Background:
This 177-nucleotide RNA was probed chemically with DMS and 2A3. The DMS profile rests on 5,219 reads. 2A3 adducts were read by reverse transcription with SuperScript II with manganese.
[RMDB]
RNA sequence: GGGAACGACUCGAGUAGAGUCGAAAACACAGUAAUUGGAGAGCAAUGGCUAGUGAUUUUAACCUGCCACCUGUAGUAGCAAAAGAAAUAGUAGCCAGCUGUGAUAAAUGUCAGCUAAAAGGAGAAGUCUUAGCACCCUAUUCGUAGGGUGCUAAGAAAAAGAAACAACAACAACAAC
Reactivity to DMS in 0.01 (KOAc 150mM, MgCl2 10mM, bicine 150mM(pH8.5), 24C), signal-to-noise 3, nucleotides 027 to 126: c040a040c010a050g000u020a080a050u040u020g000g000a110g030a120g000c090a060a080u010g010g010c000u010a020g040u030g010a060u010u000u020u000a040a230c190c050u010g010c020c010a070c020c090u030g000u060a090g000u000a070g000c050a020a070a160a120g000a040a020a010u000a060g000u010a030g000c000c010a020g040c020u010g010u000g000a120u020a070a040a070u000g000u000c000a020g000c040u000a030a040a120a080g010g000a060g010a090a110g000
Reactivity to 2A3 in 0.01 (KOAc 150mM, MgCl2 10mM, bicine 150mM(pH8.5), 24C), signal-to-noise 4, nucleotides 027 to 126: c030a000c000a000g030u080a060a100u150u100g060g020a160g000a010g110c030a030a050u030g010g010c020u070a020g060u040g230a120u000u000u010u120a040a070c000c000u020g090c000c000a020c010c050u140g030u200a200g010u040a010g060c050a040a090a060a000g100a020a040a010u150a030g100u020a000g010c000c000a000g000c010u020g010u010g030a050u190a120a070a000u210g050u110c020a000g000c110u120a070a010a040a000g070g030a060g000a100a020g040
Reactivities are given for positions 27 through 126.
The reactions ran in a buffer of 150 mM KOAc, 10 mM MgCl2 and 150 mM bicine (pH 8.5), at 24 C.